Overview:
An RNA of 177 nucleotides, treated with 2A3 and DMS and read out base by base. DMS (dimethyl sulfate) methylates the pairing face of unpaired adenines and cytosines. High 2A3 reactivity points to a flexible backbone, as in loops and unpaired stretches. 2A3 adducts were read by reverse transcription with SuperScript II with manganese.
RNA sequence: GGGAACGACUCGAGUAGAGUCGAAAAUCGAUGCUAUGUGGAAUAGGGUGGAUCUUCUGACAUGGAAGAACACCAGUAAGUACCAAGCUGCUUACCAAUUGGCUCCUGUAAGUAGCUAUCUGCCCAAGACUCUAAAUAUUUUCGAAUAUUUAGAGUCAAAAGAAACAACAACAACAAC
Reactivity to 2A3 in 0.01 (KOAc 150mM, MgCl2 10mM, bicine 150mM(pH8.5), 24C), signal-to-noise 9, nucleotides 027 to 126: u080c020g010a010u030g000c030u030a020u090g100u110g070g060a080a090u070a230g090g020g000u030g030g080a300u010c000u010u000c010u040g240a300c110a290u300g020g000a010a000g000a010a000c000a000c000c000a000g010u020a010a010g000u010a010c040c060a130a040g040c100u010g000c000u010u000a010c000c030a110a300u120u130g080g000c030u020c030c020u090g050u150a120a060g010u000a030g000c010u030a020u000c020u040g030c000c000c000a010a030
Reactivity to DMS in 0.01 (KOAc 150mM, MgCl2 10mM, bicine 150mM(pH8.5), 24C), signal-to-noise 9, nucleotides 027 to 126: u010c130g010a050u000g010c040u000a040u010g010u010g010g010a100a080u010a120g010g010g020u000g000g000a140u000c000u000u000c000u000g010a180c300a120u010g000g000a010a000g010a020a060c010a010c010c010a090g010u000a030a060g010u000a070c060c100a090a080g010c080u000g000c010u000u000a030c010c200a100a140u000u010g010g010c070u000c030c030u000g010u010a050a070g000u000a010g000c020u010a030u000c020u000g010c010c010c010a100a150